RNA sequence: GGGAACGACUCGAGUAGAGUCGAAAAUGGACGAGCCGACUCGCUUCGCCUGCUACCCCGUGUCGCACCCUCACGGUGCGUGGCGUUUCCUCUCGCCCCAAUUAUGCGCAGGCGCGCAUCACCGAAGACGGUGUCUACUUUUCGAAGUAGACACCGUAAAAGAAACAACAACAACAAC
Reactivity to 2A3 in 0.01 (KOAc 150mM, MgCl2 10mM, bicine 150mM(pH8.5), 24C), signal-to-noise 4, nucleotides 027 to 126: u110g030g020a020c030g030a020g060c030c020g080a090c010u000c020g030c030u080u090c020g010c000c030u030g020c020u070a080c000c000c010c020g010u020g030u050c020g000c030a050c000c010c000u110c020a040c060g030g020u030g020c030g000u010g020g010c020g000u010u060u050c000c000u010c010u000c000g020c000c010c000c000a030a080u160u060a040u160g040c040g000c030a040g210g050c040g020c020g000c040a020u060c020a020c020c030g040a070a030g090
Reactivity to DMS in 0.01 (KOAc 150mM, MgCl2 10mM, bicine 150mM(pH8.5), 24C), signal-to-noise 3, nucleotides 027 to 126: u020g000g000a130c060g000a060g010c020c110g000a120c050u000c070g010c030u010u000c080g020c040c050u000g000c000u010a080c070c010c000c050g030u000g040u030c040g020c050a020c020c040c060u030c140a070c130g000g030u000g010c110g040u000g010g000c050g000u030u010u000c020c010u000c080u000c070g000c000c000c030c060a110a100u000u030a050u010g010c020g000c030a150g010g010c150g010c030g040c040a060u000c160a110c060c090g020a120a100g000

Source: RMDB libraries RFM100 and RFMREP, as collected in RNAgym.
An RNA of 177 nucleotides, treated with 2A3 and DMS and read out base by base.
The reactions ran in a buffer of 150 mM KOAc, 10 mM MgCl2 and 150 mM bicine (pH 8.5), at 24 C.
Reactivities are rounded to 0.1 and cut off at 0 and 3.